About this RNA
Conditions: 150 mM KOAc, 10 mM MgCl2 and 150 mM bicine (pH 8.5), 24 C. An RNA of 177 nucleotides, treated with 2A3 and DMS and read out base by base. Values cover nucleotides 27 to 126.
RNA sequence: GGGAACGACUCGAGUAGAGUCGAAAAUACAAAUUCACUGCCGAGAUAUGCAGCCCGGAUGUAAAAAGUGAAGGACAGAAGUAUACUAUGGAAGACGUGAUGAACUUCAUGCGUUUAUCAAAUUUGGUAUACUGACAUGGUUCGCCAUGUCAGUAUAAAAAGAAACAACAACAACAAC
Reactivity to 2A3 in 0.01 (KOAc 150mM, MgCl2 10mM, bicine 150mM(pH8.5), 24C), signal-to-noise 2, nucleotides 027 to 126: u090a030c010a000a080a050u020u040c030a000c000u020g010c000c030g080a050g020a130u130a070u250g060c020a030g010c010c040c000g030g050a030u080g000u240a040a190a000a000a040g060u050g090a000a030g040g050a000c010a040g070a080a000g020u040a020u000a070c040u030a040u160g060g000a020a040g010a030c050g060u100g060a050u000g030a070a060c030u080u070c070a040u070g040c010g070u020u070u000a170u080c020a090a120a140u110u110u010g060g000
Reactivity to DMS in 0.01 (KOAc 150mM, MgCl2 10mM, bicine 150mM(pH8.5), 24C), signal-to-noise 3, nucleotides 027 to 126: u000a070c080a040a090a110u010u000c090a080c030u010g010c030c030g000a130g000a090u010a080u020g010c080a120g000c050c020c030g000g000a090u010g010u010a040a060a080a110a070g010u010g010a060a040g010g010a150c120a030g000a080a080g000u010a020u000a080c080u010a110u000g000g000a080a070g000a050c050g030u010g000a080u000g000a040a090c070u010u010c170a050u000g000c140g000u000u000u010a040u000c060a040a070a110u010u000u010g000g010